[RMDB]
RNA sequence: GGGAACGACUCGAGUAGAGUCGAAAAUAUCGCGAUUUAUCAGAACGAAUUAAACCUCCUGUCUGAUGUGGUCAAUUUACUUGUUAAACGCGCUGUAUUUCACAAGCAAAUUUCCUCCGUGGAUGAACUGACGAAAUUAACGACAGAAAUCGCCAGCCUAAUUAAAUGGCUUCGGCCAUUUAAUUAGAAAAGAAACAACAACAACAAC
Reactivity to DMS in 0.01 (KOAc 150mM, MgCl2 10mM, bicine 150mM(pH8.5), 24C), signal-to-noise 1, nucleotides 027 to 156: u000a060u010c050g000c020g010a130u000u000u010a090u020c080a140g000a130a120c070g000a060a170u020u000a060a060a140c060c030u000c050c050u000g020u010c030u020g010a110u010g010u010g000g030u010c050a050a050u010u010u000a030c030u010u000g010u000u000a000a030a010c030g030c100g010c280u000g030u000a100u010u000u000c050a060c020a030a060g030c020a020a040a040u000u000u010c020c020u000c070c040g000u000g000g040a100u000g010a070a050c020u000g020a040c040g000a080a030a120u000u000a050a040c040g010a130c080a120g020a130a050a160u000c020g010c020c020a040g000c070
Reactivity to 2A3 in 0.01 (KOAc 150mM, MgCl2 10mM, bicine 150mM(pH8.5), 24C), signal-to-noise 3, nucleotides 027 to 156: u190a040u060c040g010c020g050a080u020u060u100a090u130c030a040g020a130a040c040g010a090a100u090u070a130a130a040c000c030u000c020c030u060g070u070c030u060g060a070u110g070u050g020g000u050c030a030a050u000u030u060a050c020u010u040g020u040u030a050a070a020c080g040c020g000c160u100g020u080a090u030u070u040c060a050c030a050a060g030c030a020a070a120u060u040u010c000c000u010c040c060g040u100g030g030a080u040g090a100a090c030u040g030a010c020g050a140a000a000u130u050a110a050c000g050a010c020a030g060a020a070a010u000c010g000c040c020a020g040c020
Chemical mapping of a 207-nucleotide RNA with DMS and 2A3. For DMS, 2,265 sequencing reads were counted. Reactivities are given for positions 27 through 156. Conditions: 150 mM KOAc, 10 mM MgCl2 and 150 mM bicine (pH 8.5), 24 C. For 2A3 the reverse transcriptase was SuperScript II with manganese. It was measured as part of the RMDB library OK3TST.